[RMDB]
RNA sequence: GGGAACGACUCGAGUAGAGUCGAAAACUAAUGCUAACAAGUAUCGUAAACAAGCUGAGAAAGAUCCUGAGCUGCUAAAACGACUUAAUGAGCAGUAUGUAUCAGCAAGAGCUACAAGGAUGGAUGCUACGCCCCAACUAUUCGUAGUUGGGGCGUAAAAAGAAACAACAACAACAAC
Reactivity to DMS in 0.01 (KOAc 150mM, MgCl2 10mM, bicine 150mM(pH8.5), 24C), signal-to-noise 1, nucleotides 027 to 126: c050u000a130a110u000g000c090u000a040a050c090a060a080g020u010a030u010c070g020u000a120a110a090c200a030a050g070c000u000g010a060g000a160a240a060g000a030u000c010c030u000g000a080g000c020u000g000c080u000a020a150a050a050c090g020a080c050u000u000a050a060u000g030a040g050c000a060g000u000a050u000g050u000a090u000c020a020g000c120a040a050g000a080g000c080u000a070c110a020a060g000g000a090u000g000g020a120u000g000c090
Reactivity to 2A3 in 0.01 (KOAc 150mM, MgCl2 10mM, bicine 150mM(pH8.5), 24C), signal-to-noise 1, nucleotides 027 to 126: c000u070a080a050u100g050c000u070a010a030c110a030a040g020u090a050u190c020g080u210a170a000a040c050a070a000g010c010u000g040a010g020a030a110a020g100a030u050c000c020u000g000a000g000c000u010g020c040u060a000a040a000a250c060g140a010c090u170u140a120a080u180g080a000g040c000a000g020u040a010u160g030u000a030u040c010a000g000c020a120a000g040a050g170c100u150a130c040a020a070g190g000a060u030g020g040a000u130g040c020
This 177-nucleotide RNA was probed chemically with DMS and 2A3.
The RNA was probed in 150 mM KOAc, 10 mM MgCl2 and 150 mM bicine (pH 8.5) at 24 C.
For 2A3 the reverse transcriptase was SuperScript II with manganese.
Values are in units of 0.01, from 0 to 300, in steps of 10.
For 2A3, 603 sequencing reads were counted.
It was measured as part of the RMDB library OK2TRN.
Reactivities are given for positions 27 through 126.